[RMDB]
This 177-nucleotide RNA was probed chemically with DMS and 2A3.

RNA sequence: GGGAACGACUCGAGUAGAGUCGAAAAACUUGAGACAGACAUCGCCUCCUUCGACAAGAGCGAGGACGAUGCGAUGGCACUGACGGCACUAAUGAUUCUUGAAGACUUGGGUGUAGAUCAGGAAUUAGACGAUUGUACGUUUCGACGUACAAUCGUCAAAAGAAACAACAACAACAAC
Reactivity to DMS in 0.01 (KOAc 150mM, MgCl2 10mM, bicine 150mM(pH8.5), 24C), signal-to-noise 1, nucleotides 027 to 126: a080c050u010u000g010a120g000a220c060a050g000a170c010a030u000c010g050c010c020u010c010c000u000u000c050g020a040c290a120a130g010a050g030c160g010a010g000g030a110c000g020a080u000g040c100g010a140u000g020g000c040a060c050u000g000a190c100g010g010c050a100c050u000a070a030u000g000a090u000u000c050u000u000g000a090a180g000a030c020u000u000g010g000g060u000g020u000a070g010a110u000c020a050g000g030a010a160u030u000a090
Reactivity to 2A3 in 0.01 (KOAc 150mM, MgCl2 10mM, bicine 150mM(pH8.5), 24C), signal-to-noise 1, nucleotides 027 to 126: a010c060u100u110g050a050g010a120c010a030g080a050c000a030u010c010g030c010c060u000c010c040u050u070c020g090a080c070a300a110g010a030g070c040g000a010g030g000a030c000g000a030u020g010c030g030a010u040g000g020c030a020c060u000g090a070c030g120g070c050a010c070u080a030a110u140g020a030u080u000c000u000u100g180a090a030g010a090c030u110u100g140g100g070u040g070u030a040g070a140u050c000a010g020g060a040a050u020u030a060

The 2A3 profile rests on 782 reads. The reactions ran in a buffer of 150 mM KOAc, 10 mM MgCl2 and 150 mM bicine (pH 8.5), at 24 C. Values cover nucleotides 27 to 126.